[RMDB]
Chemical mapping of a 207-nucleotide RNA with 2A3. Values cover nucleotides 27 to 156. The data come from the RNA Mapping Database (RMDB), library VIROID. Conditions: 150 mM KOAc, 10 mM MgCl2 and 150 mM bicine (pH 8.5), 24 C.
RNA sequence: GGGAACGACUCGAGUAGAGUCGAAAAUCCUCGGACUUUCUUCUAUCUCCGAAGCCGGUUUAGAGGCCCGGCGAAACGCGGGCCUGUCUCCUAAGAUGCCUCCGCUAGUCGAGCGGACUUGGCCUCUUCCGCCCGAGGACCUUUUCUUUCUGAUCUUAACUGUAAAUUACUUCGGUAAUUUACAGUUAAAAGAAACAACAACAACAAC
Reactivity to 2A3 in 0.01 (KOAc 150mM, MgCl2 10mM, bicine 150mM(pH8.5), 24C), signal-to-noise 2, nucleotides 027 to 156: u100c000c000u010c000g070g000a080c050u210u160u070c060u220u060c040u190a300u080c050u040c140c070g010a020a000g060c060c030g050g010u110u060u120a020g020a010g000g010c020c030c030g160g010c090g050a150a220a030c090g010c000g020g000g080c000c040u010g020u010c060u070c050c040u040a040a010g010a010u070g020c010c020u010c010c000g000c020u050a080g150u220c070g160a010g030c000g010g010a000c050u120u140g000g030c000c020u000c020u000u000c020c000g020c000c000c000g020a010g010g000a000c000c000u060u080u060u050c010u090u060u030c080u090g160a220u040c040u040u010